[RMDB]
Overview
Chemical mapping of a 177-nucleotide RNA with 2A3 and DMS. It was measured as part of the RMDB libraries RFM100 and RFMREP. Reactivities are given for positions 27 through 126. For DMS the reverse transcriptase was MarathonRT.
RNA sequence: GGGAACGACUCGAGUAGAGUCGAAAAUGUUUGCCAAGACUGUAACGAAGCCAUUCAUUACUUUGAGGAUGAGAAGGUUACAACGUUUUAUGGAACGUGCUGCGGACAAUGUCAGUGUCAUCUUGAAUUACGUUACCAAGUUCGCUUGGUAACGUAAAAAAGAAACAACAACAACAAC
Reactivity to 2A3 in 0.01 (KOAc 150mM, MgCl2 10mM, bicine 150mM(pH8.5), 24C), signal-to-noise 5, nucleotides 027 to 126: u140g010u000u030u060g100c030c010a040a010g040a030c020u000g030u040a010a000c020g060a110a010g060c040c010a010u020u000c000a000u030u170a180c080u140u100u280g120a090g020g020a010u010g010a010g020a180a050g110g000u010u020a020c000a040a000c030g000u000u010u040u100a150u160g070g010a030a000c010g000u000g000c000u020g000c010g030g050a080c080a100a130u160g050u150c010a010g020u010g030u010c020a030u040c030u080u070g110a150a130
Reactivity to DMS in 0.01 (KOAc 150mM, MgCl2 10mM, bicine 150mM(pH8.5), 24C), signal-to-noise 5, nucleotides 027 to 126: u020g010u010u010u000g010c030c050a110a110g000a070c080u010g000u020a010a040c040g020a140a150g000c120c020a040u000u000c020a110u010u000a110c190u000u020u030g010a110g000g000a020u010g000a050g000a080a060g030g000u000u000a040c070a040a060c040g010u000u000u000u030a120u020g040g000a020a030c020g010u010g000c020u000g010c060g020g000a120c160a050a050u020g010u010c020a050g030u000g020u000c060a080u010c040u000u010g000a110a100
Conditions: 150 mM KOAc, 10 mM MgCl2 and 150 mM bicine (pH 8.5), 24 C.
For 2A3 the reverse transcriptase was SuperScript II with manganese.